About this RNA
This 207-nucleotide RNA was probed chemically with DMS and 2A3. For 2A3 the reverse transcriptase was SuperScript II with manganese. Reactivities are given for positions 27 through 156.

RNA sequence: GGGAACGACUCGAGUAGAGUCGAAAAACAACAGAUAGCUGGAACCAGCGUAGAAUUCUACGCAUAUCCAUAGCGAAUGGUACCUGUAAAGAAAAUAAUGAAUAAUGUACAAGUACCAACAGUGUUCAAUGCCAUGGUGAUGUCAAUCACAUAUGCAAUCCCAGCAUUUAUUCGUAAAUGCUGGGAUAAAAGAAACAACAACAACAAC
Reactivity to DMS in 0.01 (KOAc 150mM, MgCl2 10mM, bicine 150mM(pH8.5), 24C), signal-to-noise 2, nucleotides 027 to 156: a040c040a060a090c100a130g000a160u010a100g030c020u000g020g010a090a060c150c110a170g000c000g030u000a040g010a300a090u000u000c030u000a000c000g000c000a150u000a050u000c010c060a080u020a070g020c010g000a110a120u000g000g020u010a010c020c020u000g000u020a000a110a060g010a150a070a120a170u000a080a140u010g040a150a080u010a170a130u000g000u000a030c010a000a020g020u000a010c000c000a020a140c040a130g000u010g020u010u000c120a050a090u000g010c010c020a110u000g030g000u020g020a050u020g000u000c180a040a160u000c050a010c030a060u000a110u010g010c060a120
Reactivity to 2A3 in 0.01 (KOAc 150mM, MgCl2 10mM, bicine 150mM(pH8.5), 24C), signal-to-noise 4, nucleotides 027 to 156: a000c020a010a010c030a030g120a140u100a030g040c010u020g030g010a080a130c080c030a050g000c000g010u000a000g040a140a300u300u090c020u010a000c010g000c000a000u040a030u070c000c000a050u090a090g020c050g100a070a080u030g000g000u000a000c000c010u000g000u030a030a090a040g190a050a120a070a060u260a050a100u160g120a070a100u210a090a090u120g020u030a000c000a020a020g000u000a000c010c000a020a010c050a040g090u040g080u090u040c070a060a040u110g050c040c020a030u040g030g040u000g010a020u030g100u180c050a020a050u010c000a020c010a030u130a020u060g010c030a030